An RNA of 207 nucleotides, treated with DMS and 2A3 and read out base by base.
RNA sequence: GGGAACGACUCGAGUAGAGUCGAAAAGGGGUCGCUAGACAAGUCCCAUGUUGUCAGCGAUACGCGAGUGGCUGAAGCCUCCACGGCCACUCAUCGCUUGGAUUUACAUGGGUCACCCUAGCGACGGAGGCACCCAAAAGGUACGUUCGCGUACCAAACUUAGCUAUACGUUCGCGUAUAGCUAAGUAAAAGAAACAACAACAACAAC
Reactivity to DMS in 0.01 (KOAc 150mM, MgCl2 10mM, bicine 150mM(pH8.5), 24C), signal-to-noise 1, nucleotides 027 to 156: g020g010g040g020u000c010g020c030u010a040g000a070c080a100a170g010u020c010c010c000a070u000g000u000u000g010u000c050a150g030c020g030a090u000a020c120g010c140g000a020g030u020g010g070c000u000g000a060a110g000c030c020u000c000c000a300c040g010g000c000c010a020c010u000c000a040u000c050g000c020u000u000g000g020a120u000u000u000a060c050a060u020g010g000g020u000c030a080c050c040c010u000a000g020c000g000a020c000g000g010a040g070g040c030a160c000c020c010a090a070a140a130g010g020u010a020c010g010u000u010c260g090c040g020u000a020c000c000a020a050
Reactivity to 2A3 in 0.01 (KOAc 150mM, MgCl2 10mM, bicine 150mM(pH8.5), 24C), signal-to-noise 6, nucleotides 027 to 156: g150g020g040g010u000c010g000c010u000a000g020a050c070a120a030g030u010c000c010c000a010u020g020u030u030g120u100c240a060g000c030g010a040u080a100c280g030c070g060a000g000u000g000g000c010u010g010a080a010g010c000c000u000c010c010a030c010g000g000c010c000a000c010u000c000a000u000c010g030c040u150u300g220g000a050u130u140u120a020c010a000u000g010g010g010u090c060a040c010c000c000u000a000g000c000g000a000c000g000g000a000g010g000c000a050c010c000c000a020a140a010a050g000g010u010a010c010g030u050u100c250g000c010g160u000a000c000c000a010a000
The 2A3 profile rests on 9,169 reads. High 2A3 reactivity points to a flexible backbone, as in loops and unpaired stretches.